[RMDB]
RNA sequence: GGGAACGACUCGAGUAGAGUCGAAAAUUAGUGUACUGCAAGGCAUUGUGAGCACAGCAAAGAGAGAUAAAGCGUUCGUGCAUAUGCACAAAAGAAUUGAGGAUGAGCAAGCAGUGGUGCAUUUGUACUCAGAGAAAAGAUUCGUCUUUUCUCUGAGAAAAGAAACAACAACAACAAC
Reactivity to 2A3 in 0.01 (KOAc 150mM, MgCl2 10mM, bicine 150mM(pH8.5), 24C), signal-to-noise 3, nucleotides 027 to 126: u120u080a040g030u020g010u060a040c020u020g040c040a060a060g060g000c040a060u040u060g020u030g060a020g010c030a020c030a050g040c010a030a130a010g090a020g000a000g020a040u120a120a090a010g040c050g070u060u070c050g030u060g000c020a040u090a050u300g010c020a010c020a020a080a010a030g100a060a040u090u120g030a030g070g020a050u080g030a050g020c010a030a010g000c000a020g020u010g020g010u020g030c000a040u050u010u140g030u050a050
Reactivity to DMS in 0.01 (KOAc 150mM, MgCl2 10mM, bicine 150mM(pH8.5), 24C), signal-to-noise 6, nucleotides 027 to 126: u010u000a070g020u000g020u010a060c060u000g010c060a070a110g010g010c040a090u000u000g020u000g020a120g020c060a030c090a080g010c070a030a080a080g010a090g010a090g010a110u010a040a090a080g000c090g000u000u000c150g020u010g010c010a160u000a070u010g010c020a020c030a040a050a080a110g000a060a070u010u010g010a080g000g000a060u000g000a100g010c040a040a070g010c040a060g010u000g010g030u000g000c050a060u000u000u000g010u000a140

The record gives the reactivity of an RNA of 177 nucleotides to 2A3 and DMS. The DMS profile rests on 8,326 reads. For DMS the reverse transcriptase was MarathonRT. The RNA was probed in 150 mM KOAc, 10 mM MgCl2 and 150 mM bicine (pH 8.5) at 24 C.